Structure probing data (DMS and 2A3) for a 177-nucleotide construct.
2A3 adducts were read by reverse transcription with SuperScript II with manganese.
Conditions: 150 mM KOAc, 10 mM MgCl2 and 150 mM bicine (pH 8.5), 24 C.
RNA sequence: GGGAACGACUCGAGUAGAGUCGAAAAGAUGAUUCGAGAUAUACGGUAUGAAGCGGACAUUGCCGUGCAAAUGCUCGAGAAGAAGAUAGGAGAGUGUAACCAGGUCGUCCGCACGAUCGACAGAAAAGCAGUACCAGCUAUUCGUAGCUGGUACUGCAAAAGAAACAACAACAACAAC
Reactivity to DMS in 0.01 (KOAc 150mM, MgCl2 10mM, bicine 150mM(pH8.5), 24C), signal-to-noise 1, nucleotides 027 to 126: g000a000u020g000a300u040u000c000g000a000g030a100u000a150u060a110c000g040g020u040a020u000g000a030a130g000c000g030g060a170c070a060u000u000g070c000c040g000u000g020c140a060a010a050u000g000c010u030c000g040a000g020a280a020g050a040a040g000a070u040a150g000g000a070g030a040g000u000g000u030a000a140c100c000a100g010g010u000c060g000u000c000c010g040c040a110c000g000a030u000c000g020a070c130a080g000a130a000a150a170
Reactivity to 2A3 in 0.01 (KOAc 150mM, MgCl2 10mM, bicine 150mM(pH8.5), 24C), signal-to-noise 1, nucleotides 027 to 126: g100a030u240g020a000u110u030c010g000a000g000a070u010a010u040a040c000g000g000u020a020u010g130a150a000g100c000g010g050a010c010a000u030u200g050c000c000g050u000g020c000a000a120a000u240g010c000u000c000g050a000g000a100a000g080a070a000g010a070u200a060g170g000a050g000a030g010u060g000u040a030a040c040c050a010g000g000u010c030g000u000c000c010g060c000a000c020g040a020u100c010g060a030c030a070g200a020a060a020a000

Overview: Reactivities are rounded to 0.1 and cut off at 0 and 3. Reactivities are given for positions 27 through 126. Source: RMDB library OK1LIB, as collected in RNAgym.